[RMDB]
RNA sequence: GGGAACGACUCGAGUAGAGUCGAAAAAUACUUCUCAGGAUGGCGCGUAGCAGUCCAACAAGAUCCAGGGACUGUACAGAAUUUUCCUAUACCUCGAGUCGGGUUUGGAAUCUAAGGUUGACUCGCUAAAACUUUACGUGGUUCGCCACGUAAAGAACAGUAUAUAACAGUUCGCUGUUAUAUACUGAAAAGAAACAACAACAACAAC
Reactivity to 2A3 in 0.01 (KOAc 150mM, MgCl2 10mM, bicine 150mM(pH8.5), 24C), signal-to-noise 7, nucleotides 027 to 156: a000u080a030c030u050u050c030u020c030a010g100g010a060u090g040g050c050g010c050g100u050a030g040c020a000g010u010c020c010a040a050c060a120a100g120a160u090c070c050a050g040g000g000a000c000u020g010u040a030c020a060g180a190a080u030u020u020u030c000c000u040a040u070a110c010c010u020c050g010a010g010u020c020g000g000g000u040u060u040g020g010a030a020u000c040u100a130a070g090g040u090u140g040a020c010u020c030g010c030u060a060a050a060a100c000u000u000u000a000c000g000u000g010g020u020u050c100g050c060c010a000c000g000u000a000a000a000g000a010a010
Reactivity to DMS in 0.01 (KOAc 150mM, MgCl2 10mM, bicine 150mM(pH8.5), 24C), signal-to-noise 3, nucleotides 027 to 156: a120u000a030c060u010u000c020u000c010a190g010g010a090u000g000g020c100g010c070g030u000a140g040c010a050g000u000c000c000a090a190c030a080a240g000a110u000c050c020a180g010g010g010a030c000u000g000u000a140c070a140g000a090a070u010u000u000u000c020c020u010a090u000a060c060c020u000c030g020a040g030u020c040g010g010g000u000u000u000g020g000a080a050u010c060u000a110a070g000g010u010u020g010a070c050u020c040g010c030u000a030a090a160a120c000u010u000u000a020c000g030u010g000g030u000u010c300g020c010c000a020c000g010u010a000a000a020g000a060a110
Record summary: The record gives the reactivity of an RNA of 207 nucleotides to 2A3 and DMS. Values cover nucleotides 27 to 156. For DMS, 7,505 sequencing reads were counted. For DMS the reverse transcriptase was MarathonRT. The RNA was probed in 150 mM KOAc, 10 mM MgCl2 and 150 mM bicine (pH 8.5) at 24 C.